[RMDB]
RNA sequence: GGGAACGACUCGAGUAGAGUCGAAAAUGCGAAACGUAUGAUUAAGUUAAAGGGGAAAGAUGAUGAGAUAUAAUCAGCUUCAGGAAGCAAUCAUUAAAGUACCACCUGAAAUCUUAAACAAGGUGAAGUUAUGUAUCUGCUUCGGCAGAUACAUAACAAAAGAAACAACAACAACAAC
Reactivity to 2A3 in 0.01 (KOAc 150mM, MgCl2 10mM, bicine 150mM(pH8.5), 24C), signal-to-noise 2, nucleotides 027 to 126: u110g000c040g080a100a040a080c030g060u130a090u160g060a110u070u100a050a030g020u000u060a100a040a020g010g000g000g020a030a030a050g040a010u040g020a000u030g030a030g020a030u100a030u050a190a180u080c020a010g000c010u040u050c030a060g020g100a040a020g050c010a040a030u030c000a020u000u130a050a040a060g050u030a020c000c020a020c040c020u000g010a140a030a070u050c010u050u120a090a060a020c050a030a050g080g000u060g050a080a030
Reactivity to DMS in 0.01 (KOAc 150mM, MgCl2 10mM, bicine 150mM(pH8.5), 24C), signal-to-noise 3, nucleotides 027 to 126: u000g010c140g020a050a080a110c060g010u000a030u000g000a110u000u000a070a070g030u000u010a020a100a110g010g010g020g000a130a090a130g000a040u000g010a000u000g000a060g000a050u020a060u000a120a090u000c050a120g010c050u000u000c140a080g000g000a090a080g010c040a110a080u000c030a030u000u000a040a100a080g010u000a130c070c000a060c020c020u000g000a050a090a070u000c060u020u000a040a050a150c080a070a060g010g010u000g010a060a100
The record gives the reactivity of an RNA of 177 nucleotides to 2A3 and DMS. It was measured as part of the RMDB library OK2TST.